Structure probing data (DMS and 2A3) for a 177-nucleotide construct. It was measured as part of the RMDB library RFM100. The DMS profile rests on 2,299 reads. Conditions: 150 mM KOAc, 10 mM MgCl2 and 150 mM bicine (pH 8.5), 24 C. For DMS the reverse transcriptase was MarathonRT.
[RMDB]
RNA sequence: GGGAACGACUCGAGUAGAGUCGAAAACAAGGGUUUACGAGCAGAAAUGGUAUGAUUGCAAGGUUCGAAACUAAUUAAAUACCCUAGCGCUUAAAGACACUCACCUCCCGCAAAAACAUCCUCGGGUGUUUAUGUGGCUUUUCGAAGCCACAUAAACAAAAGAAACAACAACAACAAC
Reactivity to DMS in 0.01 (KOAc 150mM, MgCl2 10mM, bicine 150mM(pH8.5), 24C), signal-to-noise 2, nucleotides 027 to 126: c150a150a070g000g020g020u000u000u020a050c100g030a070g030c000a060g000a070a050a120u050g000g070u060a050u000g000a040u000u010g000c120a080a050g000g000u000u030c060g020a110a060a050c050u010a050a030u000u010a090a030a090u000a030c080c000c040u000a130g000c040g010c000u010u020a030a090a080g010a050c040a040c020u000c050a080c070c030u000c020c020c010g040c130a040a080a020a040a050c070a030u000c000c010u000c070g000g010g010u000
Reactivity to 2A3 in 0.01 (KOAc 150mM, MgCl2 10mM, bicine 150mM(pH8.5), 24C), signal-to-noise 3, nucleotides 027 to 126: c030a030a080g080g010g010u030u060u080a090c030g020a000g000c050a040g080a150a160a050u150g050g000u160a060u080g120a190u110u070g030c070a060a060g070g000u000u050c020g040a110a030a020c020u030a060a020u140u090a080a000a020u110a030c010c010c000u000a020g000c010g000c040u010u080a090a040a000g040a020c000a000c020u000c010a050c000c010u010c000c030c000g020c010a080a130a010a000a010c030a030u020c000c010u020c020g040g000g040u070